[RMDB]
RNA sequence: GGGAACGACUCGAGUAGAGUCGAAAAGUCUUUGGCUAUAGAUGCUUACCCUCUCACAAAGCAUGAAGAUAUAGAAUACCAGAAUGUAUUCUGGGUCUACUUACAGUAUAUAGAAAAACUGUAUAAAUAACAAGAGUCUUCGGACUCUUGAAAAGAAACAACAACAACAAC
Reactivity to DMS in 0.01 (KOAc 150mM, MgCl2 10mM, bicine 150mM(pH8.5), 24C), signal-to-noise 3, nucleotides 027 to 129: g050u020c040u020u010u000g050g000c040u050a150u040a070g040a100u070g020c030u020u050a140c070c000c000u030c140u000c130a100c150a090a090a050g140c030a050u020g020a050a090g020a020u130a100u000a030g010a000a040u030a110c020c130a040g030a030a060u070g000u100a140u020u000c000u040g020g010g020u030c020u050a080c220u030u000a040c010a030g030u010a040u030a300u040a160g030a090a030a080a080a000c040u020g000u000a060u050a060a060a080u040a050a040
Reactivity to 2A3 in 0.01 (KOAc 150mM, MgCl2 10mM, bicine 150mM(pH8.5), 24C), signal-to-noise 6, nucleotides 027 to 129: g030u030c020u060u040u060g060g000c010u050a040u080a230g100a040u100g010c020u060u110a170c000c000c000u040c000u030c000a080c020a120a160a000g050c000a030u150g070a090a030g070a030u040a040u040a160g080a050a010u070a190c010c000a010g040a050a040u130g100u190a150u060u010c000u000g000g000g030u000c030u080a100c050u070u030a010c000a000g050u010a050u040a020u100a210g250a040a110a030a010a000c000u000g020u000a020u090a090a070a020u110a080a030